[RMDB]
RNA sequence: GGGAACGACUCGAGUAGAGUCGAAAACGGGCUCGCGGCGUUCUCGAUCAUCGGCUGCGAUGUCGCGGCGGCCGUGAACGGCAGCCCGGUCGUGAUCGUGCUCGCGGGCGCGAUCACCGGCGUUUGAAUAAUAUGGUACGUUCGCGUACCAUAUUAUAAAAGAAACAACAACAACAAC
Reactivity to DMS in 0.01 (KOAc 150mM, MgCl2 10mM, bicine 150mM(pH8.5), 24C), signal-to-noise 6, nucleotides 027 to 126: c030g000g010g010c020u000c100g020c040g000g020c030g010u000u010c010u000c010g010a050u000c050a070u000c060g030g020c080u000g000c010g020a110u010g010u010c050g020c120g010g010c020g010g010c040c010g010u000g000a040a090c060g010g010c050a040g000c010c000c010g000g010u000c040g010u000g000a010u000c000g020u000g010c010u000c030g030c260g020g000g020c010g000c010g010a010u000c010a020c060c080g030g010c120g020u000u010u010g000a200
Reactivity to 2A3 in 0.01 (KOAc 150mM, MgCl2 10mM, bicine 150mM(pH8.5), 24C), signal-to-noise 4, nucleotides 027 to 126: c020g000g010g000c020u030c100g010c070g200g040c020g040u090u030c010u010c010g020a130u090c020a020u130c040g140g040c080u130g060c070g120a190u160g130u250c080g010c020g130g000c000g040g030c000c000g020u010g030a060a000c020g050g030c030a010g010c000c010c000g020g000u000c000g000u010g010a000u030c000g010u020g000c010u010c030g030c200g050g000g000c010g000c000g010a010u010c010a010c010c020g050g040c020g030u130u300u300g050a040